[RMDB]
RNA sequence: GGGAACGACUCGAGUAGAGUCGAAAAGGAUGUAUUAAACAUCUUAUAACAGAAUCUAAUUUUUCUGAUGCUGUAAAUCUUGUAUUAACCAAUAUUGGUAAAUUUCAUAAAGCUGAUAGAGCAUAUGACCUAGCAUGACUUUCGAGUCAUGCUAGGUAAAAGAAACAACAACAACAAC
Reactivity to 2A3 in 0.01 (KOAc 150mM, MgCl2 10mM, bicine 150mM(pH8.5), 24C), signal-to-noise 4, nucleotides 027 to 126: g020g000a050u030g010u020a200u110u290a240a190a010c000a000u000c010u090u090a170u050a140a020c010a010g090a040a030u080c050u120a150a300u130u110u080u040u000c030u020g000a000u030g050c020u040g040u200a000a160a190u080c030u030u090g050u040a020u040u180a060a030c040c010a150a140u090a190u220u060g000g000u010a080a040a110u040u070u010c080a050u160a090a080a010g050c040u000g080a240u140a150g190a020g060c010a010u030a060u140g050
Reactivity to DMS in 0.01 (KOAc 150mM, MgCl2 10mM, bicine 150mM(pH8.5), 24C), signal-to-noise 1, nucleotides 027 to 126: g000g010a010u020g000u000a150u080u000a110a140a030c000a000u000c000u000u000a060u020a150a140c010a050g000a130a150u000c180u070a060a100u030u050u010u010u010c060u020g000a070u020g000c040u000g010u000a120a190a060u040c060u000u000g000u000a080u000u000a080a070c050c000a020a140u050a070u000u040g000g000u000a060a010a020u000u000u060c070a040u000a040a080a050g020c030u000g000a130u000a190g000a010g000c040a130u000a040u000g000